[RMDB]
RNA sequence: GGGAACGACUCGAGUAGAGUCGAAAAGAUAUGGAGUAGGAAGGACAUGUCCGCCCGGACUCGGAAACGAGUUCGGACAACAGCCUUCUACUCCUAAGUCAAAGCGGGGACGUUCGCGUCCCCGCAAGUUAGUGUAGGUGUUCGCACCUACACUAACAAAAGAAACAACAACAACAAC
Reactivity to DMS in 0.01 (KOAc 150mM, MgCl2 10mM, bicine 150mM(pH8.5), 24C), signal-to-noise 2, nucleotides 027 to 126: g000a040u000a300u010g010g030a020g000u000a010g030g000a020a020g000g000a050c070a080u000g000u010c140c140g020c060c000c010g020g000a000c000u010c020g010g000a060a050a140c000g010a000g000u000u000c000g000g010a000c010a220a040c020a120g000c000c010u000u000c000u000a010c000u010c000c010u010a010a040g010u010c020a120a130a110g030c000g060g010g010g000a020c000g040u000u030c230g000c050g030u010c000c000c000c000g030c000a000a010
Reactivity to 2A3 in 0.01 (KOAc 150mM, MgCl2 10mM, bicine 150mM(pH8.5), 24C), signal-to-noise 3, nucleotides 027 to 126: g010a000u050a040u130g010g000a010g030u040a070g150g300a080a040g030g020a060c160a300u250g090u150c120c120g050c020c020c000g000g000a000c010u000c010g010g000a050a020a010c010g000a000g000u000u010c000g050g020a000c010a030a030c010a010g080c000c020u000u000c000u000a010c000u020c010c000u020a090a010g020u010c040a050a130a060g010c000g000g000g000g000a000c020g060u110u210c300g040c000g160u040c000c000c000c000g020c010a000a000
The record gives the reactivity of an RNA of 177 nucleotides to DMS and 2A3. It was measured as part of the RMDB library TTRDES. The reactions ran in a buffer of 150 mM KOAc, 10 mM MgCl2 and 150 mM bicine (pH 8.5), at 24 C. Values cover nucleotides 27 to 126. DMS adducts were read by reverse transcription with MarathonRT.